About this RNA:
Conditions: 150 mM KOAc, 10 mM MgCl2 and 150 mM bicine (pH 8.5), 24 C. Chemical mapping of a 177-nucleotide RNA with 2A3 and DMS.
[RMDB]
RNA sequence: GGGAACGACUCGAGUAGAGUCGAAAACAUGAGAGUACCGUUAGUUGUUUGCAAGAUUGGCAUCAACACGCGGUUAUUGAAAUAUUCAGUUGAUUGGUAAUAGCUAAGCAGUGAACCAUCACUAGCAGUGUGAUAGUGAAUUCGUUCACUAUCACACAAAAGAAACAACAACAACAAC
Reactivity to 2A3 in 0.01 (KOAc 150mM, MgCl2 10mM, bicine 150mM(pH8.5), 24C), signal-to-noise 3, nucleotides 027 to 126: c070a070u120g070a080g010a010g180u040a010c020c000g010u000u060a050g000u010u050g040u080u090u080g010c030a070a070g030a300u170u260g200g030c040a010u020c000a010a000c020a010c060g020c000g060g020u030u010a070u040u040g030a000a020a010u180a060u060u100c030a020g050u080u070g150a100u080u180g020g010u060a080a060u030a130g070c040u050a150a050g050c050a020g100u020g050a020a020c050c000a040u040c000a000c020u000a060g050c060a020
Reactivity to DMS in 0.01 (KOAc 150mM, MgCl2 10mM, bicine 150mM(pH8.5), 24C), signal-to-noise 5, nucleotides 027 to 126: c110a080u020g020a230g020a140g010u010a020c020c010g040u000u010a300g010u000u000g000u010u000u010g020c010a110a130g020a160u000u020g000g030c020a020u000c000a020a020c020a060c270g030c020g000g010u000u000a070u000u000g010a070a070a080u010a060u000u000c090a030g010u000u000g010a070u010u000g020g010u000a040a070u010a100g000c050u000a110a080g020c150a040g010u000g010a100a080c080c050a060u000c030a040c030u000a130g010c150a090
The 2A3 profile rests on 2,350 reads. The DMS profile rests on 3,605 reads.